[RMDB]
RNA sequence: GGGAACGACUCGAGUAGAGUCGAAAACGUCAGAAGACGAAGUCGGUCCAUCUGCGGUAACAGACCGACAUAGAGUUCGAAGCAGAACGGACAACCGCAGACACACGAUUGGAGUGUGAAUGAGAGACGGAUAUAGUGGGUUCGCCCACUAUAUCCGAAAAGAAACAACAACAACAAC
Reactivity to 2A3 in 0.01 (KOAc 150mM, MgCl2 10mM, bicine 150mM(pH8.5), 24C), signal-to-noise 4, nucleotides 027 to 126: c010g020u010c010a100g030a300a040g010a130c010g000a080a000g000u010c010g000g000u000c040c030a050u010c020u010g000c000g030g010u040a080a020c000a070g030a000c000c000g000a000c000a020u070a010g110a000g010u010u010c010g050a060a000g200c110a050g010a060a000c010g010g010a000c000a010a010c000c000g010c000a000g040a010c000a000c000a000c000g160a150u110u300g140g010a140g010u020g020u010g070a010a080u170g030a140g040a030g020a050
Reactivity to DMS in 0.01 (KOAc 150mM, MgCl2 10mM, bicine 150mM(pH8.5), 24C), signal-to-noise 3, nucleotides 027 to 126: c040g000u000c010a230g030a120a050g000a010c030g030a170a090g000u000c000g000g030u010c050c220a190u000c010u000g010c030g000g000u000a110a140c190a090g020a070c000c000g020a050c070a030u000a040g000a090g000u000u000c000g000a070a100g000c130a150g000a040a020c000g020g000a120c120a050a050c000c010g020c000a000g020a140c060a050c000a000c000g000a140u000u030g010g020a110g040u000g070u000g010a170a080u010g000a070g010a090g070a220
Annotation
Conditions: 150 mM KOAc, 10 mM MgCl2 and 150 mM bicine (pH 8.5), 24 C. Structure probing data (2A3 and DMS) for a 177-nucleotide construct. It was measured as part of the RMDB library OK1LIB. The DMS profile rests on 3,441 reads. DMS adducts were read by reverse transcription with MarathonRT.